[RMDB]
Conditions: 150 mM KOAc, 10 mM MgCl2 and 150 mM bicine (pH 8.5), 24 C. An RNA of 207 nucleotides, treated with 2A3 and read out base by base. Reactivities are rounded to 0.1 and cut off at 0 and 3. Reactivities are given for positions 27 through 156. High 2A3 reactivity points to a flexible backbone, as in loops and unpaired stretches.
RNA sequence: GGGAACGACUCGAGUAGAGUCGAAAACUCCUCCUGAAUAUAUGGAGGCCAUAUACCCUGUCAGGUCAAAUUCAACAAUUGCUAGGGGUGGCAACAACAAUACAGGCUUCCUGACACCGGAGUCAGUCAAUGGAGACACUCCAUCGAAUCCACUCAGGCUUUGAGAGCAAUUCGUUGCUCUCAAAGCAAAAGAAACAACAACAACAAC
Reactivity to 2A3 in 0.01 (KOAc 150mM, MgCl2 10mM, bicine 150mM(pH8.5), 24C), signal-to-noise 1, nucleotides 027 to 156: c030u000c000c000u000c010c000u060g060a230a010u080a010u010a110u240g000g000a000g010g000c020c000a080u110a000u060a030c000c000c010u060g030u030c040a060g060g040u000c030a070a000a270u180u050c010a040a030c010a010a110u120u120g000c030u080a060g060g040g000g000u020g000g000c030a060a030c010a040a000c000a000a130u170a070c020a030g060g000c000u080u060c010c060u000g010a010c000a010c010c020g040g010a020g020u060c020a040g030u020c030a090a100u190g030g020a070g020a030c010a020c150u000c000c000a000u020c040g040a020a050u000c000c000a020c140u030c030a030g130